[RMDB]
RNA sequence: GGGAACGACUCGAGUAGAGUCGAAAACCAAGCGUUCGCGCUUGGAGUGGCUUGUUUUAAGUUGCCUGCGAUCUCUUAAUGACUCAGGCAGCUAAAGCAAGUCUGGUUACCUCGCUUUCGAGCGAGGCUGACUUGCGUUGUUCGCAACGCAAGUCAGAAAAGAAACAACAACAACAAC
Reactivity to DMS in 0.01 (KOAc 150mM, MgCl2 10mM, bicine 150mM(pH8.5), 24C), signal-to-noise 2, nucleotides 027 to 126: c000c000a000a010g020c020g030u010u010c240g030c020g020c010u000u010g000g010a120g010u000g000g020c000u000u020g000u000u000u030u000a040a050g020u000u000g000c000c000u000g010c110g010a150u000c020u000c300u010u000a140a120u010g000a020c020u000c000a010g010g010c070a010g030c000u010a010a010a020g000c000a000a000g000u000c000u000g020g000u010u010a200c000c000u000c000g010c000u010u000u020c200g020a050g010c000g010a020g000g010
Reactivity to 2A3 in 0.01 (KOAc 150mM, MgCl2 10mM, bicine 150mM(pH8.5), 24C), signal-to-noise 2, nucleotides 027 to 126: c000c000a000a000g000c000g020u070u170c300g020c000g000c150u010u020g040g000a120g180u160g010g030c000u000u040g050u070u060u010u010a140a030g010u000u000g000c010c010u000g000c010g100a300u040c050u020c030u080u210a270a140u300g000a000c000u000c000a000g020g000c060a000g000c000u000a000a000a000g000c000a010a000g010u020c000u000g040g000u080u060a070c000c000u000c020g040c010u160u010u120c180g060a020g010c000g000a000g010g000
The record gives the reactivity of an RNA of 177 nucleotides to DMS and 2A3. DMS adducts were read by reverse transcription with MarathonRT. Values cover nucleotides 27 to 126. The data come from the RNA Mapping Database (RMDB), library RFMREP. For 2A3 the reverse transcriptase was SuperScript II with manganese.